[RMDB]
RNA sequence: GGGAACGACUCGAGUAGAGUCGAAAAUUAAAGGAGGAGGAGGAGUGUGUGUCUUCCCAGCUGCUGAGUAGAACCUCCGCACACACGCGAAUGCUACGAGCAGCAGCAGUGCGGAAACGGUGAAAAACGGUUAGAAUGAGUUCGCUCAUUCUAACCGAAAAGAAACAACAACAACAAC
Reactivity to DMS in 0.01 (KOAc 150mM, MgCl2 10mM, bicine 150mM(pH8.5), 24C), signal-to-noise 3, nucleotides 027 to 126: u010u010a040a090a140g030g010a040g010g000a070g000g020a110g010g000a110g020u010g010u020g040u000g000u020c050u010u000c020c020c020a170g030c050u000g020c020u010g000a090g010u010a050g000a120a100c050c020u000c020c010g040c010a040c050a080c140a150c140g020c030g010a030a150u020g010c000u000a040c100g000a130g020c030a020g000c100a080g020c050a080g010u010g020c080g000g000a070a020a050c170g010g000u010g010a040a040a060a090a130
Reactivity to 2A3 in 0.01 (KOAc 150mM, MgCl2 10mM, bicine 150mM(pH8.5), 24C), signal-to-noise 1, nucleotides 027 to 126: u100u030a080a010a000g010g040a020g010g030a040g000g010a020g000g000a070g040u030g000u030g020u000g020u050c020u020u040c000c000c010a000g000c020u050g000c000u020g040a020g090u070a020g050a040a040c010c030u000c000c000g040c000a040c020a000c020a010c000g010c010g030a160a050u030g000c000u020a080c120g140a050g060c010a000g000c010a000g000c010a000g030u050g000c020g020g000a040a090a030c080g070g030u090g080a070a050a000a000a000